[RMDB]
RNA sequence: GGGAACGACUCGAGUAGAGUCGAAAACUGUUGCUGGUGCCGGUGAUUCGCUUUAACGCCGCAGAUGCGCGAGCGCGUAAGCGCUAUGCAAGAUUGGCGAAGCUGUGCCAUUUCAGCCCGCCCAAUGACUACUGUAUUUCUUCGGAAAUACAGUAGUAAAAGAAACAACAACAACAAC
Reactivity to DMS in 0.01 (KOAc 150mM, MgCl2 10mM, bicine 150mM(pH8.5), 24C), signal-to-noise 8, nucleotides 027 to 126: c040u000g010u000u000g010c110u000g010g030u000g010c070c110g010g020u000g000a140u000u000c020g000c010u000u000u000a050a060c040g010c230c050g010c030a040g000a130u010g000c060g020c020g010a080g000c050g000c070g010u010a080a170g000c000g010c020u000a090u000g010c010a110a060g000a100u000u000g010g010c000g010a060a080g000c020u000g010u010g000c030c040a050u000u000u010c010a040g010c010c050c060g010c020c010c040a110a090u020g010
Reactivity to 2A3 in 0.01 (KOAc 150mM, MgCl2 10mM, bicine 150mM(pH8.5), 24C), signal-to-noise 6, nucleotides 027 to 126: c000u020g050u120u060g030c080u020g030g030u030g040c050c040g020g050u050g090a200u040u040c020g030c030u060u090u130a110a030c050g040c050c030g010c040a030g040a230u210g010c020g000c020g040a040g050c080g000c020g030u040a110a040g020c010g000c010u030a040u080g000c010a000a090g080a300u070u140g000g010c000g000a020a010g010c010u040g010u050g010c010c010a010u020u040u020c020a020g010c000c010c030g040c000c010c000a040a080u150g060
The record gives the reactivity of an RNA of 177 nucleotides to DMS and 2A3. For DMS the reverse transcriptase was MarathonRT. For 2A3, 9,740 sequencing reads were counted.